[RMDB]
This 177-nucleotide RNA was probed chemically with 2A3 and DMS. DMS (dimethyl sulfate) methylates the pairing face of unpaired adenines and cytosines.
RNA sequence: GGGAACGACUCGAGUAGAGUCGAAAAAAGGAAAUCAACGACAAAUACUUUGAUUUCGACGCUUACGGCGCUGAAAACUGAUAAUUGUCUUAUGGGAUUGCGCCAGUCUGCUACAGGCAGACUGGCACUAUUUACCACCCUUCGGGGUGGUAAAUAGAAAAGAAACAACAACAACAAC
Reactivity to 2A3 in 0.01 (KOAc 150mM, MgCl2 10mM, bicine 150mM(pH8.5), 24C), signal-to-noise 2, nucleotides 027 to 126: a010a000g150g010a040a040a020u070c020a010a050c020g060a030c010a010a050a020u120a060c060u150u090u050g040a060u050u030u000c000g010a010c000g000c000u060u110a050c230g040g000c000g000c010u020g030a020a010a000a000c020u020g070a090u070a110a060u030u030g030u010c030u080u190a120u150g150g030g040a070u070u110g040c030g010c020c010a010g000u010c000u000g050c010u060a130c080a110g160g000c030a000g010a000c010u000g000g010c010a000
Reactivity to DMS in 0.01 (KOAc 150mM, MgCl2 10mM, bicine 150mM(pH8.5), 24C), signal-to-noise 3, nucleotides 027 to 126: a060a070g000g010a060a030a030u010c020a110a150c300g000a010c020a010a010a100u000a050c110u010u000u000g000a100u000u000u000c000g000a040c010g000c000u000u010a090c250g000g000c000g000c000u000g000a010a010a000a050c030u020g000a030u000a040a060u000u010g000u000c010u000u000a100u010g010g000g000a060u000u010g000c090g020c000c000a010g000u000c000u000g010c000u010a060c300a130g020g010c010a000g010a010c000u000g000g010c010a010

It was measured as part of the RMDB library OK2TST. For 2A3, 2,374 sequencing reads were counted. For DMS, 3,169 sequencing reads were counted.